[RMDB]
RNA sequence: GGGAACGACUCGAGUAGAGUCGAAAACACAUACCAGCGGCCAUCCGGCUCGCGGGACACGAUCACCAUCGUCGGAUUCAGCGUUGCGAGGGUUUCGUCGUCCCAGGACCACACGAACUCAAGCGGCCUACACUGGCCCGUUCGCGGGCCAGUGUAGAAAAGAAACAACAACAACAAC
Reactivity to 2A3 in 0.01 (KOAc 150mM, MgCl2 10mM, bicine 150mM(pH8.5), 24C), signal-to-noise 1, nucleotides 027 to 126: c040a000c000a020u140a000c030c030a000g030c050g080g020c000c000a090u130c050c050g010g000c080u140c100g100c070g000g010g000a000c010a000c030g090a140u110c050a030c010c000a050u010c010g070u030c030g210g000a170u270u200c060a060g070c070g130u080u130g000c000g000a000g020g000g030u000u000u010c000g010u030c060g000u000c020c050c000a020g000g070a000c040c050a010c000a000c050g070a110a050c030u020c090a000a040g010c000g000g000c020
This 177-nucleotide RNA was probed chemically with 2A3. The reactions ran in a buffer of 150 mM KOAc, 10 mM MgCl2 and 150 mM bicine (pH 8.5), at 24 C. 2A3 is a SHAPE reagent: it acylates the 2'-hydroxyl of flexible nucleotides of all four kinds. It was measured as part of the RMDB library RFM100.